[RMDB]
RNA sequence: GGGAACGACUCGAGUAGAGUCGAAAACCCUUCACUGGGUGUGUCGGGGAACCAGGACUUUUACUUUGAAAAAAUUAGAGUGUUCAAAGCAGGCCUAUGCUCGAAUACAUUAGCAUGGAAUAAUAGAGCGGAACUAAAUGUUCGCAUUUAGUUCCGCAAAAGAAACAACAACAACAAC
Reactivity to 2A3 in 0.01 (KOAc 150mM, MgCl2 10mM, bicine 150mM(pH8.5), 24C), signal-to-noise 2, nucleotides 027 to 126: c000c030c000u000u010c040a000c040u130g010g000g010u130g040u050g000u030c040g050g020g000g030a060a010c000c000a040g040g000a030c010u040u030u000u080a030c040u000u100u060g020a180a000a000a000a000a000u300u300a090g070a030g050u290g200u030u000c000a000a000a000g000c080a120g020g080c000c000u050a020u170g020c000u000c050g050a050a030u030a060c000a000u030u040a040g000c050a040u040g040g000a010a030u060a190a050u130a130g150a000

The data come from the RNA Mapping Database (RMDB), library RFM100. Structure probing data (2A3) for a 177-nucleotide construct. For 2A3 the reverse transcriptase was SuperScript II with manganese. The 2A3 profile rests on 595 reads. Conditions: 150 mM KOAc, 10 mM MgCl2 and 150 mM bicine (pH 8.5), 24 C.